[RMDB]
RNA sequence: GGGAACGACUCGAGUAGAGUCGAAAAAAGUUCUGGAACAGCCUGAUGGUACUUGGAGAUGUGAGAAGUGCGACACCAAUAAUGCAAGGCCAAAUUGGAGAUACAUCUUGACAAUAUCAAUUAUUGAGCGAUAUUUUAGGUUCGCCUAAAAUAUCGCAAAAGAAACAACAACAACAAC
Reactivity to DMS in 0.01 (KOAc 150mM, MgCl2 10mM, bicine 150mM(pH8.5), 24C), signal-to-noise 2, nucleotides 027 to 126: a120a030g010u020u000c050u010g020g010a090a120c090a100g000c030c030u000g010a090u000g000g020u000a020c070u000u000g010g040a100g020a030u020g040u000g010a110g000a080a030g030u000g020c050g010a090c040a060c010c050a030a070u010a080a060u000g000c030a030a100g020g000c000c040a000a120a070u000u000g000g000a090g000a120u000a070c090a030u010c040u000u000g000a100c060a020a070u000a060u000c110a050a060u010u000a090u000u000g000a280
Reactivity to 2A3 in 0.01 (KOAc 150mM, MgCl2 10mM, bicine 150mM(pH8.5), 24C), signal-to-noise 1, nucleotides 027 to 126: a040a000g010u110u000c010u010g040g030a060a040c020a050g020c000c010u050g040a040u020g000g050u040a100c010u040u090g040g010a090g020a050u070g040u020g040a090g040a170a050g040u030g030c030g060a050c000a020c080c010a040a030u070a100a020u080g020c070a120a030g050g000c000c000a000a050a110u040u080g060g040a040g000a000u050a050c010a100u060c000u010u000g020a020c010a010a020u030a010u210c030a070a140u160u090a110u100u190g030a020